[RMDB]
RNA sequence: GGGAACGACUCGAGUAGAGUCGAAAACUAUCAUAGAUAGCGGCCUACACAAUUACUACCGACAUCGCACUGAUAACUCAGCUAGCCAGAGCCUGGACUUACAGUCUCUCGUUCCAGAAGAACUGGCGUAUAGCGGCUAAUUCGUUAGCCGCUAUACAAAAGAAACAACAACAACAAC
Reactivity to 2A3 in 0.01 (KOAc 150mM, MgCl2 10mM, bicine 150mM(pH8.5), 24C), signal-to-noise 3, nucleotides 027 to 126: c020u020a020u120c000a160u080a260g030a030u040a020g000c050g020g050c000c030u100a040c070a010c010a100a120u180u100a100c050u040a050c030c000g010a040c000a060u080c060g000c050a020c050u030g040a070u070a120a040c030u020c100a030g020c020u040a020g000c010c000a020g000a010g090c000c020u020g030g020a010c000u030u170a060c070a080g070u010c010u000c000u020c080g060u110u000c000c000a020g030a060a030g030a120a080c010u010g020g020c000
Reactivity to DMS in 0.01 (KOAc 150mM, MgCl2 10mM, bicine 150mM(pH8.5), 24C), signal-to-noise 3, nucleotides 027 to 126: c030u010a040u000c030a140u000a130g010a040u000a030g040c010g010g010c030c030u010a060c140a100c140a080a030u010u000a050c050u000a040c090c020g010a060c090a060u000c100g000c070a130c080u000g010a090u000a030a120c120u000c000a040g000c070u000a060g010c030c030a020g000a100g010c060c020u010g020g010a060c120u010u000a090c090a060g000u000c070u000c080u020c070g010u000u000c000c000a110g010a120a090g000a100a090c020u000g000g010c140
The data come from the RNA Mapping Database (RMDB), library OK2TRN. An RNA of 177 nucleotides, treated with 2A3 and DMS and read out base by base. The RNA was probed in 150 mM KOAc, 10 mM MgCl2 and 150 mM bicine (pH 8.5) at 24 C. For 2A3, 2,563 sequencing reads were counted. DMS adducts were read by reverse transcription with MarathonRT. The DMS profile rests on 2,381 reads.